An RNA of 177 nucleotides, treated with DMS and read out base by base. DMS adducts were read by reverse transcription with MarathonRT. The RNA was probed in 150 mM KOAc, 10 mM MgCl2 and 150 mM bicine (pH 8.5) at 24 C.
RNA sequence: GGGAACGACUCGAGUAGAGUCGAAAAGAAGAUGAUGUGUAGGAUAGGUGGGAGGCUUUGAAGUGUCGACGCCAGUCUGCAUGGAGCCGACCUUGAAAUACCACCCUUUAAUGAAAAACAAAUACAACAAUGGGAGGGUGUUCGCACCCUCCCAUUGAAAAGAAACAACAACAACAAC
Reactivity to DMS in 0.01 (KOAc 150mM, MgCl2 10mM, bicine 150mM(pH8.5), 24C), signal-to-noise 1, nucleotides 027 to 126: g020a100a020g010a080u010g000a030u000g050u000g020u010a080g050g020a070u000a060g000g030u000g000g000g000a090g070g030c290u000u000u010g000a040a030g000u010g020u000c290g020a010c030g000c040c090a060g000u000c090u000g020c070a040u010g000g010a050g010c020c000g000a020c100c010u000u000g010a030a030a090u000a060c010c010a040c010c010c060u000u000u010a070a100u000g000a040a050a040a060a040c100a020a060a070u010a070c120a080a140
About this RNA: Values are in units of 0.01, from 0 to 300, in steps of 10.